RNA sequence: GGGAACGACUCGAGUAGAGUCGAAAAGAUCGGCCACGCGUACGCGCUGGCCCUGGUACCACGUACUGAUCUGUCGGCCGUACGGAUCUAGAUGAGGCCACAGGCCAGGCGCUCUGGCGCGUACGUAACCUCGUUCAGAAUUCGUUCUGAACGAGGUAAAAGAAACAACAACAACAAC
Reactivity to DMS in 0.01 (KOAc 150mM, MgCl2 10mM, bicine 150mM(pH8.5), 24C), signal-to-noise 4, nucleotides 027 to 126: g010a070u010c030g030g000c010c010a180c230g010c040g020u000a010c000g010c010g010c020u010g010g000c040c010c000u000g000g000u000a080c070c030a130c100g030u000a090c150u000g010a030u000c000u000g000u010c100g010g000c020c020g010u000a110c030g000g000a010u010c010u010a090g010a080u000g010a100g020g000c120c070a070c130a190g010g000c010c020a020g000g000c220g010c050u000c130u000g020g000c000g000c000g010u000a000c010g010u000a090
Reactivity to 2A3 in 0.01 (KOAc 150mM, MgCl2 10mM, bicine 150mM(pH8.5), 24C), signal-to-noise 4, nucleotides 027 to 126: g080a060u090c010g010g020c000c000a080c090g020c010g010u000a000c000g000c010g000c020u010g020g000c000c010c000u010g010g010u180a290c020c050a080c090g060u080a150c050u080g020a020u000c000u010g020u040c100g000g020c030c000g000u020a010c000g000g010a010u020c050u080a070g050a230u100g080a080g110g010c070c030a040c020a030g110g000c010c010a000g030g010c130g010c100u130c060u070g020g010c010g000c000g010u000a000c000g000u000a000
The data come from the RNA Mapping Database (RMDB), library OK2TRN. Structure probing data (DMS and 2A3) for a 177-nucleotide construct. The DMS profile rests on 3,848 reads. For 2A3 the reverse transcriptase was SuperScript II with manganese.